[RMDB]
RNA sequence: GGGAACGACUCGAGUAGAGUCGAAAAAUUGUGGCACUGCUCACAAUAGCAAAGACUUGGAACCAACCCAAAUGCCCACCAAUGAUAGAUUGGAUAAAGAAAAUGUGGCACAUAUACACCAUGGAAUACUAUGCAGCCAUAAAAAAGGAUGAGUUCAUCAUUCUACAAUUUUCGAAUUGUAGAAUGAAAAAGAAACAACAACAACAAC
Reactivity to 2A3 in 0.01 (KOAc 150mM, MgCl2 10mM, bicine 150mM(pH8.5), 24C), signal-to-noise 5, nucleotides 027 to 156: a000u030u010g000u040g020g000c030a040c300u140g000c030u050c020a020c000a010a030u050a020g040c040a070a080a020g030a090c060u050u060g030g020a050a090c020c020a020a050c030c030c000a020a070a050u070g030c000c010c000a040c010c010a020a020u080g090a200u150a180g100a060u010u010g020g010a030u100a100a170a050g080a060a100a040a030u110g010u050g020g000c030a000c010a050u090a050u030a040c060a030c040c060a020u080g040g050a110a020u080a170c030u020a020u090g010c040a010g000c030c020a020u080a030a100a010a020a010a010g050g000a040u090g030a040g050u050u040c020a020
Reactivity to DMS in 0.01 (KOAc 150mM, MgCl2 10mM, bicine 150mM(pH8.5), 24C), signal-to-noise 2, nucleotides 027 to 156: a070u000u000g060u000g020g020c010a160c150u010g010c060u010c030a030c030a020a050u010a090g000c060a100a060a170g010a080c060u000u000g000g000a130a110c050c010a040a080c020c020c030a100a100a090u000g010c000c000c010a090c030c010a040a060u000g000a140u000a060g010a110u000u010g010g020a100u000a050a040a090g000a090a050a070a080u000g030u000g000g010c040a080c030a050u000a070u000a050c040a050c070c050a080u030g020g040a080a070u010a050c090u000a040u000g000c010a070g000c030c010a050u000a000a010a040a050a090a090g000g010a080u000g000a060g000u000u010c030a110